[RMDB]
RNA sequence: GGGAACGACUCGAGUAGAGUCGAAAAAAGGGGAAUGUACUGUGGGUACAAUUAUUUGUCAAGAUUGCAAUGAAACCAUUGAUCAAUUUGAAAAUGAAAAAGUGACAACACUUUAUGGAACAUGUGGACGGAGUAAUGGGUUCGCCCAUUACUCCGUAAAAGAAACAACAACAACAAC
Reactivity to 2A3 in 0.01 (KOAc 150mM, MgCl2 10mM, bicine 150mM(pH8.5), 24C), signal-to-noise 2, nucleotides 027 to 126: a000a000g090g000g000g000a060a240u080g040u100a030c020u050g020u040g190g060g000u060a030c030a050a040u080u110a120u050u140u150g120u020c000a030a000g010a110u000u050g000c000a000a010u040g070a170a040a030c050c010a020u000u000g010a010u100c000a000a000u010u000u060g000a120a020a000a000u100g120a000a260a020a000a000g010u030g040a040c000a300a010c010a120c030u000u060u060a040u120g040g020a120a020c090a030u090g020u070g030g000
Reactivity to DMS in 0.01 (KOAc 150mM, MgCl2 10mM, bicine 150mM(pH8.5), 24C), signal-to-noise 2, nucleotides 027 to 126: a020a010g040g000g000g000a160a080u000g000u010a050c080u010g070u000g000g010g010u000a120c080a050a070u010u000a040u000u000u000g030u020c020a000a070g010a010u010u000g000c010a050a040u010g000a100a100a100c220c020a000u000u000g050a150u000c030a020a030u000u000u000g060a030a090a010a050u020g000a040a050a050a010a040g000u000g000a070c300a090a110c040a040c000u000u000u080a070u020g020g000a030a060c050a040u000g010u010g010g010